[RMDB]
RNA sequence: GGGAACGACUCGAGUAGAGUCGAAAACACAAGCACCACCAGGGCAGGCUCGUACUGACUUUCGAAUUCUCUCUGACCUUGGUCGUCGGCUCAUUGGCGAGACAUUUGAUUAUCAAAAUAUCGAGGCAGUGUUUACUGAGUUGACACAAGUAAGCCCCAGAAUACUAACAUUCGUGUUAGUAUUCUGAAAAGAAACAACAACAACAAC
Reactivity to DMS in 0.01 (KOAc 150mM, MgCl2 10mM, bicine 150mM(pH8.5), 24C), signal-to-noise 4, nucleotides 027 to 156: c050a080c070a100a140g000c050a130c020c020a020c040c030a080g000g010g030c020a070g010g000c050u010c060g020u000a100c050u000g010a060c050u000u000u000c060g020a100a170u000u000c020u010c020u000c010u000g010a090c060c020u000u020g020g010u000c070g010u000c040g030g020c030u000c000a130u020u010g020g010c060g020a210g000a060c030a070u000u000u000g010a120u000u000a300u000c100a070a030a050a090u000a050u000c030g000a120g020g010c020a080g020u000g020u000u010u000a150c070u010g010a090g030u000u000g010a090c050a040c040a030a080g000u000a060a110g000c010c000c020
Reactivity to 2A3 in 0.01 (KOAc 150mM, MgCl2 10mM, bicine 150mM(pH8.5), 24C), signal-to-noise 8, nucleotides 027 to 156: c100a000c010a020a060g040c030a030c030c010a010c000c010a040g000g020g000c020a010g010g010c010u040c060g060u100a040c090u120g140a080c030u110u130u080c070g070a130a140u180u010c080u010c000u000c020u060g220a300c020c000u030u030g030g020u040c040g030u010c020g020g020c020u010c030a070u040u150g080g020c050g020a030g050a030c040a050u120u100u090g070a100u050u180a110u250c050a000a040a080a110u140a040u100c030g010a050g050g000c040a030g020u020g040u110u070u040a050c060u040g020a000g050u050u060g040a020c030a010c010a090a030g050u070a080a020g020c010c000c000
Background: An RNA of 207 nucleotides, treated with DMS and 2A3 and read out base by base. For DMS, 10,515 sequencing reads were counted. The RNA was probed in 150 mM KOAc, 10 mM MgCl2 and 150 mM bicine (pH 8.5) at 24 C. Reactivities are given for positions 27 through 156.